[RMDB]
RNA sequence: GGGAACGACUCGAGUAGAGUCGAAAACAGAUUUCCUCUGGAAGGCCAAGUUGAAGGUGGAGCAGGAGGAGGUGGAAACCAUGCGUGGCAUUAACAAGAUUCUGCUGGAGAACAUCCUGCCGGCCCAACUAAUGCCCAUAUUCGUAUGGGCAUUAGUAAAAGAAACAACAACAACAAC
Reactivity to 2A3 in 0.01 (KOAc 150mM, MgCl2 10mM, bicine 150mM(pH8.5), 24C), signal-to-noise 4, nucleotides 027 to 126: c020a000g070a070u050u070u070c030c020u010c050u080g070g050a080a040g080g000c000c040a060a070g060u060u100g110a100a030g040g020u040g030g060a060g030c020a020g030g040a010g000g020a030g030g030u050g020g050a050a030a010c030c010a040u210g000c030g020u040g020g020c000a020u070u070a110a070c080a120a040g010a030u060u020c000u010g020c010u010g020g010a030g010a030a030c010a030u010c010c000u010g010c010c010g030g000c000c000c000a000
Reactivity to DMS in 0.01 (KOAc 150mM, MgCl2 10mM, bicine 150mM(pH8.5), 24C), signal-to-noise 7, nucleotides 027 to 126: c110a100g000a140u000u010u000c030c020u000c060u010g010g020a110a100g010g000c040c040a050a100g010u000u000g010a070a070g010g010u000g010g010a130g010c070a080g010g000a070g000g020a080g010g020u000g000g000a110a150a100c050c030a040u000g010c060g010u010g000g000c020a060u010u010a060a110c230a050a130g000a050u000u000c020u000g000c010u000g000g010a080g010a110a140c080a070u010c020c020u000g000c030c040g010g010c010c010c050a080
The record gives the reactivity of an RNA of 177 nucleotides to 2A3 and DMS. 2A3 adducts were read by reverse transcription with SuperScript II with manganese. The 2A3 profile rests on 5,293 reads. The reactions ran in a buffer of 150 mM KOAc, 10 mM MgCl2 and 150 mM bicine (pH 8.5), at 24 C. For DMS, 8,486 sequencing reads were counted.